[RMDB]
RNA sequence: GGGAACGACUCGAGUAGAGUCGAAAAGAAACUGCAACGAGGCAGAAACUCGAAAGCUAGCGAAACAAAAGACGCUGCAACGGUGAGGUAGCGUCAAACUCGCCGAAAACAAGCUAGCGAAAAGAAAGGGUAUCACUAUCUUCGGAUAGUGAUACCCAAAAGAAACAACAACAACAAC
Reactivity to DMS in 0.01 (KOAc 150mM, MgCl2 10mM, bicine 150mM(pH8.5), 24C), signal-to-noise 2, nucleotides 027 to 126: g020a150a090a050c000u060g010c000a230a250c170g000a050g030g000c000a040g000a110a130a130c000u040c070g000a090a030a300g040c010u000a000g000c030g000a090a160a050c300a110a100a090a200g020a000c030g000c000u000g000c020a090a060c180g000g000u000g000a020g000g120u000a020g000c000g000u000c100a030a000a040c090u020c060g000c200c090g010a110a010a160a120c170a070a290g000c000u000a000g000c000g000a270a140a210a040g020a010a020a030
Reactivity to 2A3 in 0.01 (KOAc 150mM, MgCl2 10mM, bicine 150mM(pH8.5), 24C), signal-to-noise 2, nucleotides 027 to 126: g050a000a150a040c030u000g000c080a070a000c030g060a070g060g000c040a050g090a290a000a070c060u050c020g100a130a100a000g000c020u000a000g000c020g060a090a090a200c060a080a140a010a000g030a030c040g030c050u100g000c000a110a150c050g030g110u110g050a110g070g000u000a000g030c020g020u000c010a000a010a090c000u040c010g000c000c110g100a090a000a000a000c130a060a000g030c000u000a000g000c000g040a010a010a010a010g040a000a080a150